[RMDB]
RNA sequence: GGGAACGACUCGAGUAGAGUCGAAAAGAGAGGCCUCUUCCUAGGCCCGGAGUCUAUCUCCAUCUGGUCCGUCCGGGCCCUCUUCGCCGGGGGAGCCCCCUCUCCAUCCCUGUCCUUCUUUCCGAGUUACCACGUGCGUUCGCGCACGUGAAAAGAAACAACAACAACAAC
Reactivity to 2A3 in 0.01 (KOAc 150mM, MgCl2 10mM, bicine 150mM(pH8.5), 24C), signal-to-noise 2, nucleotides 027 to 129: g030a000g010a000g000g020c030c000u040c000u060u060c000c030u040a000g010g010c000c000c000g020g000a010g010u000c020u070a090u090c050u040c050c010a040u030c050u070g010g020u040c030c060g110u030c020c010g010g020g000c010c040c010u140c100u220u190c110g050c060c030g000g000g000g000g000a020g020c010c010c000c000c000u000c000u020c000c000a040u000c010c000c020u010g030u020c030c000u010u060c000u050u020u000c020c010g020a040g050u080u070a150c030
Reactivity to DMS in 0.01 (KOAc 150mM, MgCl2 10mM, bicine 150mM(pH8.5), 24C), signal-to-noise 2, nucleotides 027 to 129: g040a000g030a060g000g000c300c000u010c050u020u010c000c000u000a000g000g000c030c010c080g020g020a000g060u020c080u040a000u030c050u030c030c050a090u020c130u040g000g060u010c040c040g040u010c040c040g040g020g030c000c010c070u000c070u000u000c220g090c130c070g030g010g000g030g010a010g020c040c050c090c010c010u000c020u030c000c060a150u030c000c000c000u000g000u030c030c020u000u030c040u050u030u070c040c050g010a130g030u000u060a000c080
Notes
An RNA of 170 nucleotides, treated with 2A3 and DMS and read out base by base. Values are in units of 0.01, from 0 to 300, in steps of 10. The RNA was probed in 150 mM KOAc, 10 mM MgCl2 and 150 mM bicine (pH 8.5) at 24 C. For 2A3 the reverse transcriptase was SuperScript II with manganese. Source: RMDB library 15KLIB, as collected in RNAgym. Reactivities are given for positions 27 through 129. For DMS, 14,142 sequencing reads were counted.